[RMDB]
RNA sequence: GGGAACGACUCGAGUAGAGUCGAAAAGCCAUCUACGGGCGUGCUCGUGACCAUACGUAUCAUUUUGCCCCUGGCACAGAAUUGCAGGUAGAGCUAGGUAAACCCCGGCUGCCGCCUGGGCAAGUGCGCCUUGCAGUCGUUUCGACGACUGCAAGGCAAAAGAAACAACAACAACAAC
Reactivity to 2A3 in 0.01 (KOAc 150mM, MgCl2 10mM, bicine 150mM(pH8.5), 24C), signal-to-noise 2, nucleotides 027 to 126: g070c010c000a160u070c030u090a100c050g030g060g020c030g000u030g070c000u100c030g070u030g120a140c030c010a080u110a160c090g090u120a060u140c010a040u060u200u060u120g020c000c000c000c000u010g010g030c030a000c020a010g210a160a170u130u110g030c010a030g010g000u150a070g040a010g030c010u010a050g070g000u050a020a160a160c020c000c000c000g000g000c000u000g220c100c010g000c030c000u000g080g000g000c010a030a000g030u010g020c110